RNA sequence: GGGAACGACUCGAGUAGAGUCGAAAACAAACGUGCUGCUCGGCCGCGAUCUGAUCGGCAACGGCGUCACCGGGACGGCGGCAGCUCCCAACGGUGGCCCCGGCGGUUUGCUAUUCGGUGACGGUGGCCACAUACUCUAAUUCGUUAGAGUAUGUGGAAAAGAAACAACAACAACAAC
Reactivity to 2A3 in 0.01 (KOAc 150mM, MgCl2 10mM, bicine 150mM(pH8.5), 24C), signal-to-noise 9, nucleotides 027 to 126: c020a000a120a010c060g070u070g010c010u020g010c010u030c060g070g000c020c020g050c050g050a110u030c040u080g030a070u050c040g050g000c070a080a090c030g060g010c010g010u010c000a000c010c000g010g020g050a040c040g020g020c000g030g010c030a030g020c040u020c010c010c000a070a030c050g030g030u040g030g010c000c020c000c010g050g010c020g060g000u060u090u170g020c020u070a080u080u100c010g020g010u030g020a030c020g040g110u040g060g020
Reactivity to DMS in 0.01 (KOAc 150mM, MgCl2 10mM, bicine 150mM(pH8.5), 24C), signal-to-noise 9, nucleotides 027 to 126: c090a070a100a140c120g010u000g010c020u000g000c060u000c060g010g010c020c040g010c100g000a090u010c060u000g000a060u000c060g010g000c050a090a110c050g000g000c160g010u000c020a030c020c010g000g010g010a090c090g010g010c030g000g010c070a060g000c050u000c020c010c020a110a140c100g010g020u000g000g000c030c040c020c030g000g000c050g010g010u000u000u010g020c040u000a110u000u000c020g010g010u000g000a060c030g010g010u000g010g010
The record gives the reactivity of an RNA of 177 nucleotides to 2A3 and DMS. The reactions ran in a buffer of 150 mM KOAc, 10 mM MgCl2 and 150 mM bicine (pH 8.5), at 24 C. It was measured as part of the RMDB library OK2TRN. For 2A3 the reverse transcriptase was SuperScript II with manganese. DMS adducts were read by reverse transcription with MarathonRT.